[RMDB]
RNA sequence: GGGAACGACUCGAGUAGAGUCGAAAAGAUAUGGAGUGUGGCUAGAAGGGACUCGGAAACGAGUCGACCUUCUUGGACCCACCUCCUAAGUCAAAGCUCAUCAAGCUGUUCGCAGCUUGAUGAGCAACUCUGAGGACGAGUUCGCUCGUCCUCAGAGAAAAGAAACAACAACAACAAC
Reactivity to DMS in 0.01 (KOAc 150mM, MgCl2 10mM, bicine 150mM(pH8.5), 24C), signal-to-noise 1, nucleotides 027 to 126: g000a070u010a290u000g020g020a000g000u010g040u000g000g000c070u020a040g000a010a010g010g000g000a040c000u000c000g010g020a140a110a130c010g000a010g000u000c000g000a150c000c000u000u000c000u000u000g060g010a120c300c030c000a000c010c020u000c000c010u000a020a070g000u000c020a130a070a190g010c000u000c000a000u000c000a010a000g000c020u000g000u000u020c230g000c010a020g000c000u010u000g010a010u000g000a010g010c000a010a010
Conditions: 150 mM KOAc, 10 mM MgCl2 and 150 mM bicine (pH 8.5), 24 C. Chemical mapping of a 177-nucleotide RNA with DMS. The DMS profile rests on 898 reads.